[RMDB]
RNA sequence: GGGAACGACUCGAGUAGAGUCGAAAAGGGACGCCUUUAGAAGAAGAGGCUAGGUGGUAUUCCGGUGUCGGAUACUUGGUAAUAUGUAACGCUAAUUGCAUAAGAUUGUAGGACGGAAUUUACAGUCAAAACGGUCCUGCGUUCGCGCAGGACCGAAGAACGGAAUAGAGUUCGCUCUAUUCCGUUCAAAAGAAACAACAACAACAAC
Reactivity to DMS in 0.01 (KOAc 150mM, MgCl2 10mM, bicine 150mM(pH8.5), 24C), signal-to-noise 1, nucleotides 027 to 156: g010g000g040a100c120g000c000c040u000u000u000a070g010a190a160g000a130a110g000a100g010g050c030u000a110g010g040u000g020g030u000a070u010u000c020c030g040g020u010g000u010c030g010g030a110u020a050c080u000u000g040g000u010a060a120u000a070u010g040u000a040a110c100g010c070u000a070a140u010u000g000c010a040u010a080a160g000a060u000u010g030u000a070g010g000a190c030g020g010a140a180u010u000u000a040c050a050g030u000c030a030a050a090a080c070g030g030u000c000c020u010g030c000g000u010u000c300g000c070g000c020a050g000g000a010c000c000g020a000a030
Reactivity to 2A3 in 0.01 (KOAc 150mM, MgCl2 10mM, bicine 150mM(pH8.5), 24C), signal-to-noise 4, nucleotides 027 to 156: g030g000g010a020c040g010c010c020u100u080u070a180g030a250a010g020a030a010g000a030g010g010c050u040a030g020g080u090g020g010u100a100u100u080c040c040g080g070u150g100u130c020g010g020a030u040a060c020u040u090g030g030u090a070a040u050a090u090g040u030a060a010c040g010c130u100a120a070u100u080g000c020a040u030a080a060g020a040u020u090g030u050a020g000g090a010c030g020g000a020a010u080u050u050a070c030a010g030u020c030a020a040a080a070c010g000g000u000c010c000u000g000c000g000u020u040c130g000c010g000c060a010g030g000a000c020c000g020a000a010

Overview:
This 207-nucleotide RNA was probed chemically with DMS and 2A3. Source: RMDB library M2RFPK, as collected in RNAgym. For DMS, 2,422 sequencing reads were counted. DMS adducts were read by reverse transcription with MarathonRT. Reactivities are given for positions 27 through 156.